Conditions: 150 mM KOAc, 10 mM MgCl2 and 150 mM bicine (pH 8.5), 24 C. This 207-nucleotide RNA was probed chemically with 2A3 and DMS. DMS (dimethyl sulfate) methylates the pairing face of unpaired adenines and cytosines. The DMS profile rests on 1,568 reads. 2A3 adducts were read by reverse transcription with SuperScript II with manganese.
RNA sequence: GGGAACGACUCGAGUAGAGUCGAAAAUGCUGUCGUUGACAGCGCCCAACGCUUCACAACCUGAAAGAAGUGCCUGUUAUCAGGACGGUUGAUCCAUUUACCGGUGCAGACCUCUGCAAACACCGGGUUUAACAAGCAUCUUUCGAGAUGCUUGUAAACAGGUACGUGGAUUCGUCCACGUACCUGUAAAAGAAACAACAACAACAAC
Reactivity to 2A3 in 0.01 (KOAc 150mM, MgCl2 10mM, bicine 150mM(pH8.5), 24C), signal-to-noise 2, nucleotides 027 to 156: u100g000c010u000g010u020c040g300u110u300g030a000c000a000g000c020g020c000c000c000a060a000c030g000c000u000u000c010a040c000a120a000c010c000u010g000a000a020a000g000a010a010g000u020g080c000c000u170g040u210u190a120u300c000a000g010g010a000c020g020g060u000u000g020a040u030c070c030a070u030u060u180a120c030c000g000g000u020g020c000a000g110a230c030c110u230c020u090g000c080a060a080a000c050a030c020c000g000g000g000u000u170u060a020a000c000a010a000g000c000a000u000c000u000u110u120c140g070a030g000a000u000g000c030u000u000g000u000a000a000
Reactivity to DMS in 0.01 (KOAc 150mM, MgCl2 10mM, bicine 150mM(pH8.5), 24C), signal-to-noise 1, nucleotides 027 to 156: u010g060c000u000g000u000c000g020u000u000g020a000c080a010g010c020g000c010c100c060a090a210c050g010c030u000u000c010a220c020a110a100c070c110u010g010a140a180a140g030a050a030g030u000g010c030c040u010g000u000u010a220u000c090a020g000g000a160c050g000g000u020u000g010a270u060c100c000a250u010u000u000a140c000c000g000g030u000g010c000a180g000a240c130c080u000c040u020g020c040a250a090a000c020a040c010c000g040g050g010u000u000u000a070a080c010a010a000g010c000a010u000c000u000u000u000c300g000a030g070a010u000g010c010u000u000g040u000a020a100